Structure probing data (DMS and 2A3) for a 177-nucleotide construct. The DMS profile rests on 2,712 reads. Conditions: 150 mM KOAc, 10 mM MgCl2 and 150 mM bicine (pH 8.5), 24 C. DMS adducts were read by reverse transcription with MarathonRT. For 2A3 the reverse transcriptase was SuperScript II with manganese. The 2A3 profile rests on 2,305 reads. Reactivities are rounded to 0.1 and cut off at 0 and 3. Reactivities are given for positions 27 through 126.

RNA sequence: GGGAACGACUCGAGUAGAGUCGAAAAACAACAGUAAGUGCAUAAUGAAAUGAUCUUCAUAGCACAAACCGUUUUCAUUGUGCUUGCGGGUAUAUUUUUUUCUUCUAAAAGUACUGGCUGGUUAACAGCCUGCAUAGGAAUUCGUUCCUAUGCAGGCAAAAGAAACAACAACAACAAC
Reactivity to DMS in 0.01 (KOAc 150mM, MgCl2 10mM, bicine 150mM(pH8.5), 24C), signal-to-noise 3, nucleotides 027 to 126: a110c070a090a090c020a030g020u000a110a100g010u000g000c000a070u010a100a070u010g000a010a030a040u000g000a040u010c050u000u000c040a080u010a050g000c010a020c020a010a090a090c170c160g010u000u000u000u000c100a110u000u000g020u000g000c010u000u000g000c280g010g010g020u000a040u020a000u000u000u010u000u010u000u010c120u010u010c090u010a070a080a090a080g010u000a010c020u010g000g010c010u000g010g000u000u000a070a090c110a110
Reactivity to 2A3 in 0.01 (KOAc 150mM, MgCl2 10mM, bicine 150mM(pH8.5), 24C), signal-to-noise 2, nucleotides 027 to 126: a010c000a000a020c020a000g030u040a110a020g000u010g020c000a050u060a210a070u200g010a010a050a030u090g030a030u020c020u050u030c060a060u130a060g000c010a000c020a010a020a010c040c050g070u110u040u110u140c040a050u030u040g010u000g000c000u020u020g000c030g020g070g070u010a150u010a120u220u060u000u040u010u100u040c030u110u060c030u040a060a090a020a010g020u020a020c020u020g080g020c000u030g090g000u070u060a080a040c020a020